[RMDB]
RNA sequence: GGGAACGACUCGAGUAGAGUCGAAAAGAUAUGGAGCACUCCGAUAAGCCUACGGUCGGAAACGACCGAGGCUUUUGACGGAGACUCCUAAGUCAAAGGUCAUCAAGUGUUCGCACUUGAUGACCAACAUAAUAUGAGCGUUCGCGCUCAUAUUAUGAAAAGAAACAACAACAACAAC
Reactivity to DMS in 0.01 (KOAc 150mM, MgCl2 10mM, bicine 150mM(pH8.5), 24C), signal-to-noise 6, nucleotides 027 to 126: g010a050u010a300u010g000g010a000g010c060a130c000u000c000c000g000a170u000a030a020g010c000c000u000a100c000g010g010u000c000g000g010a070a090a170c000g000a000c000c000g010a030g000g010c010u000u000u000u010g010a110c060g010g000a020g010a230c000u000c000c000u010a030a100g000u000c040a060a100a120g000g010u000c000a010u000c000a010a000g010u000g010u000u000c240g020c000a010c000u000u000g010a000u000g000a000c000c000a000a030
Reactivity to 2A3 in 0.01 (KOAc 150mM, MgCl2 10mM, bicine 150mM(pH8.5), 24C), signal-to-noise 4, nucleotides 027 to 126: g010a020u080a030u100g010g000a010g040c100a070c300u000c000c010g070a110u060a170a000g000c000c010u100a170c060g000g000u010c010g040g000a160a040a030c010g000a000c000c010g000a000g010g010c020u010u000u020u030g010a000c000g010g000a010g000a010c010u000c000c000u010a090a030g030u010c070a120a080a150g000g000u000c000a000u000c000a000a010g010u010g050u140u180c300g070c140a000c000u000u000g000a000u000g000a000c000c000a000a000
Chemical mapping of a 177-nucleotide RNA with DMS and 2A3.
It was measured as part of the RMDB library TTRDEL.
The reactions ran in a buffer of 150 mM KOAc, 10 mM MgCl2 and 150 mM bicine (pH 8.5), at 24 C.